[RMDB]
RNA sequence: GGGAACGACUCGAGUAGAGUCGAAAAGCAUACAACUUCGGUUGUAUGCAACGACAGAGUAGACUGUCAUAAACAACGUAACAUGUGAGUUACAAUAACACAUUGCAGCAGCUUUCGAGCUGCUGAACCAUAGUGGUACGUUCGCGUACCACUAUGGAAAAGAAACAACAACAACAAC
Reactivity to DMS in 0.01 (KOAc 150mM, MgCl2 10mM, bicine 150mM(pH8.5), 24C), signal-to-noise 5, nucleotides 027 to 126: g010c010a000u010a000c000a000a020c000u010u010c190g030g000u000u010g000u000a010u000g000c000a050a040c150g010a010c000a010g000a240g020u010a170g010a120c000u000g010u000c010a110u000a070a090a120c150a140a080c130g010u010a030a020c030a150u010g000u020g010a160g000u010u000a030c060a150a130u020a040a110c100a050c140a110u010u000g010c000a020g000c000a010g010c000u010u010u010c230g000a000g010c000u000g010c000u010g000a030a100
Reactivity to 2A3 in 0.01 (KOAc 150mM, MgCl2 10mM, bicine 150mM(pH8.5), 24C), signal-to-noise 7, nucleotides 027 to 126: g000c000a010u000a000c000a010a000c010u040u090c210g110g000u000u000g000u010a000u000g000c000a000a010c040g020a000c000a000g030a020g180u240a030g080a100c010u010g000u020c010a010u200a030a130a020c070a020a050c080g020u020a010a010c020a050u130g140u090g290a100g040u040u050a000c030a010a040u170a100a040c100a010c030a120u080u300g040c010a000g000c000a010g010c000u040u060u180c210g060a000g000c000u010g000c000u000g000a000a010

The data come from the RNA Mapping Database (RMDB), library M2PK50. This 177-nucleotide RNA was probed chemically with DMS and 2A3. For 2A3, 11,641 sequencing reads were counted. Values are in units of 0.01, from 0 to 300, in steps of 10. The RNA was probed in 150 mM KOAc, 10 mM MgCl2 and 150 mM bicine (pH 8.5) at 24 C. For 2A3 the reverse transcriptase was SuperScript II with manganese.